[RMDB]
RNA sequence: GGGAACGACUCGAGUAGAGUCGAAAAGAAAUCCCCGGCCGCCGUAAACCCGAGGUUUCCAGGGCAACGUGUUUCGUCCCUGGGUUAGCCGGGACCUAAGCCGAGGCCGAGAGGCGUAGGCGAUGGAUCAUAUUCGGUUGUUCGCAACCGAAUAUGAAAAAGAAACAACAACAACAAC
Reactivity to 2A3 in 0.01 (KOAc 150mM, MgCl2 10mM, bicine 150mM(pH8.5), 24C), signal-to-noise 5, nucleotides 027 to 126: g030a000a050a020u090c020c000c000c000g010g010c000c050g020c010c000g070u070a060a050a070c010c020c010g040a100g020g020u020u080u050c000c000a000g010g010g030c100a070a010c040g020u080g260u080u150u130c300g120u300c010c000c000u010g010g000g000u010u040a000g010c000c000g000g010g010a010c000c000u020a100a010g000c000c000g010a040g020g090c000c010g030a020g000a030g030g000c000g000u010a000g000g000c000g000a010u030g000g010a000
Reactivity to DMS in 0.01 (KOAc 150mM, MgCl2 10mM, bicine 150mM(pH8.5), 24C), signal-to-noise 5, nucleotides 027 to 126: g030a050a080a130u010c070c010c000c030g000g030c030c070g020c080c050g000u010a050a080a120c020c010c010g040a090g000g010u010u000u010c010c000a000g010g000g030c160a040a030c090g000u010g010u000u010u020c030g010u020c010c000c010u000g000g010g020u010u020a060g020c020c000g000g000g010a140c020c010u020a150a280g020c010c000g000a200g020g000c000c010g010a170g000a160g010g010c010g000u000a300g000g000c020g000a120u020g000g000a300
Source: RMDB libraries RFM100 and RFMREP, as collected in RNAgym. An RNA of 177 nucleotides, treated with 2A3 and DMS and read out base by base.